[RMDB]
RNA sequence: GGGAACGACUCGAGUAGAGUCGAAAAGAUAUGGAGAUACUGAGGGAGAGAUUGGUUCGGAAACGAACCAAUCUCUUUGAUCUCACAUGUAUCUCCUAAGUCAAACCGGGACCUUCGGGUCCCGGAACUAAUCCCCAAAGUUCGCUUUGGGGAUUAGAAAAGAAACAACAACAACAAC
Reactivity to DMS in 0.01 (KOAc 150mM, MgCl2 10mM, bicine 150mM(pH8.5), 24C), signal-to-noise 1, nucleotides 027 to 126: g020a030u000a300u000g000g000a000g000a000u000a010c060u020g000a020g040g010g010a010g000a010g000a020u000u020g000g020u000u000c000g000g000a100a110a150c010g000a010a010c000c000a000a000u000c000u000c000u020u020u010g020a060u010c000u010c000a100c300a120u010g000u010a020u000c000u020c010c000u000a010a050g000u020c050a060a150a160c020c000g010g020g020a030c000c010u000u010c150g020g000g040u020c010c030c040g000g000a010a040
This 177-nucleotide RNA was probed chemically with DMS.